Conditions: 150 mM KOAc, 10 mM MgCl2 and 150 mM bicine (pH 8.5), 24 C.
Chemical mapping of a 177-nucleotide RNA with DMS and 2A3.
2A3 adducts were read by reverse transcription with SuperScript II with manganese.
For 2A3, 18,132 sequencing reads were counted.
Reactivities are rounded to 0.1 and cut off at 0 and 3.
It was measured as part of the RMDB library OK1LIB.
DMS adducts were read by reverse transcription with MarathonRT.
For DMS, 26,501 sequencing reads were counted.
[RMDB]
RNA sequence: GGGAACGACUCGAGUAGAGUCGAAAAUGCAGCCGCUUGCAUCAUGGUUCCCCUUCCCCAAGUUUUGCGAGCACAUGCGUGCGGAAGGCAGAAACAUAACGACGUUACGCCACGCGUCAAGCCGCUGUCUUAUAAAGGAGUUCGCUCCUUUAUAAGAAAAAGAAACAACAACAACAAC
Reactivity to DMS in 0.01 (KOAc 150mM, MgCl2 10mM, bicine 150mM(pH8.5), 24C), signal-to-noise 9, nucleotides 027 to 126: u020g010c030a090g010c040c080g010c030u000u010g020c050a040u000c070a100u020g020g020u000u000c010c000c010c050u010u010c000c010c000c070a110a130g010u010u010u010u010g000c030g010a110g010c030a080c150a110u030g010c060g030u010g000c020g000g010a090a100g000g000c050a070g010a120a070a070c130a110u030a080a120c160g010a110c100g010u000u020a100c050g000c000c020a040c050g010c040g000u000c120a090a120g000c020c030g000c020u010g000
Reactivity to 2A3 in 0.01 (KOAc 150mM, MgCl2 10mM, bicine 150mM(pH8.5), 24C), signal-to-noise 9, nucleotides 027 to 126: u100g000c010a010g070c060c060g060c100u070u040g000c010a030u030c020a090u210g110g000u020u030c000c000c000c000u020u020c010c000c000c010a090a090g020u020u020u070u140g050c030g030a050g030c010a020c010a080u130g030c030g040u030g010c010g030g050a080a040g100g010c040a020g130a060a140a010c060a100u230a120a020c090g110a020c040g070u070u070a020c030g030c020c020a020c020g010c000g040u040c040a040a030g020c010c000g010c040u030g030